[RMDB]
RNA sequence: GGGAACGACUCGAGUAGAGUCGAAAACCAACACACCUAAAGCCAUGCUUUGAAGGAUCUGCCAAGCUCACUUUUAAUCAUGAGAAAGAAAUUACCCACACGGAGUCAGCAGAAAAUGAGAAAGUAGGGCUCAGUGCAUAUUCGUAUGCACUGAGCCAAAAGAAACAACAACAACAAC
Reactivity to 2A3 in 0.01 (KOAc 150mM, MgCl2 10mM, bicine 150mM(pH8.5), 24C), signal-to-noise 1, nucleotides 027 to 126: c000c000a040a000c170a000c000a000c000c050u000a020a020a030g000c000c000a080u220g040c040u010u000u030g060a000a010g120g000a000u050c000u000g030c010c000a000a010g000c000u020c000a060c000u060u040u060u110a040a000u020c080a040u300g000a000g060a100a160a000g120a000a000a000u040u210a080c030c000c000a100c000a030c030g010g030a000g170u070c000a000g000c000a270g040a010a120a140a170u210g000a140g060a030a050a000g000u140a050g000